Source: RMDB library ARCHII, as collected in RNAgym. Chemical mapping of a 207-nucleotide RNA with 2A3. For 2A3 the reverse transcriptase was SuperScript II with manganese. Conditions: 150 mM KOAc, 10 mM MgCl2 and 150 mM bicine (pH 8.5), 24 C.
RNA sequence: GGGAACGACUCGAGUAGAGUCGAAAAGCAAACGACGAAAACUACGCUUUAGCCGCUUAAUCCGGCUAAACUCCACACCGGUGGGCCUCAACGCCGGGUCUGGCAACAGACAGUGGAGUCAUUAACGAGGAUCGCGUUUUGCAGGGUUACUUUGCAGGAUGUAAAUUUCCUUCGGGAAAUUUACAUCAAAAGAAACAACAACAACAAC
Reactivity to 2A3 in 0.01 (KOAc 150mM, MgCl2 10mM, bicine 150mM(pH8.5), 24C), signal-to-noise 1, nucleotides 027 to 156: g000c030a040a010a000c030g300a010c010g020a050a060a070a040c020u240a150c000g000c030u050u000u000a010g010c010c000g060c060u130u130a100a070u150c030c010g000g000c000u010a040a000a000c000u000c000c000a020c000a020c000c000g000g000u020g040g110g100c040c040u190c040a100a000c010g000c000c000g000g000g000u000c000u000g020g000c020a040a050c000a110g000a010c000a000g040u000g050g010a010g010u010c000a080u100u160a070a070c040g000a010g000g010a010u000c000g000c010g020u050u000u080u130g020c020a020g080g070g000u040u050a070c020u120u100u080g080c090a040g010